Structure probing data (DMS and 2A3) for a 177-nucleotide construct. Values cover nucleotides 27 to 126. 2A3 adducts were read by reverse transcription with SuperScript II with manganese. For DMS the reverse transcriptase was MarathonRT.

RNA sequence: GGGAACGACUCGAGUAGAGUCGAAAAAUUUGCACGCUCGUUGUUUAGACGCCCUUGUUCGAAUACGAGAACAUAAAGACAUCUCACAGUGGGAUCUUGGAUAUUUUUAUCCAAGUUCUCCCGGACCAACCUAGCUCAGGUUCGCCUGAGCUAGGUUAAAAGAAACAACAACAACAAC
Reactivity to DMS in 0.01 (KOAc 150mM, MgCl2 10mM, bicine 150mM(pH8.5), 24C), signal-to-noise 1, nucleotides 027 to 126: a150u000u120u020g040c150a210c190g010c040u030c060g050u000u000g040u000u000u010a130g000a110c090g000c030c020c000u030u000g020u000u000c040g000a130a060u050a170c130g000a110g020a020a040c040a080u080a050a000a020g060a050c180a030u000c040u000c040a110c110a090g080u060g030g040g030a000u000c000u000u010g000g000a000u000a000u010u060u000u010u000a020u000c000c000a000a040g000u010u000c140u000c000c000c030g090g000a110c090c040
Reactivity to 2A3 in 0.01 (KOAc 150mM, MgCl2 10mM, bicine 150mM(pH8.5), 24C), signal-to-noise 1, nucleotides 027 to 126: a000u180u120u160g080c030a000c020g050c020u070c030g020u000u090g070u000u050u010a050g000a030c000g040c000c060c000u030u040g040u060u000c040g110a180a000u060a300c050g000a000g040a070a010c020a000u110a030a070a000g030a020c050a110u020c060u030c040a010c050a060g080u180g080g000g000a000u000c010u000u010g010g000a000u000a020u040u200u030u020u030a000u130c000c020a000a010g000u030u000c030u000c000c000c000g050g020a030c010c000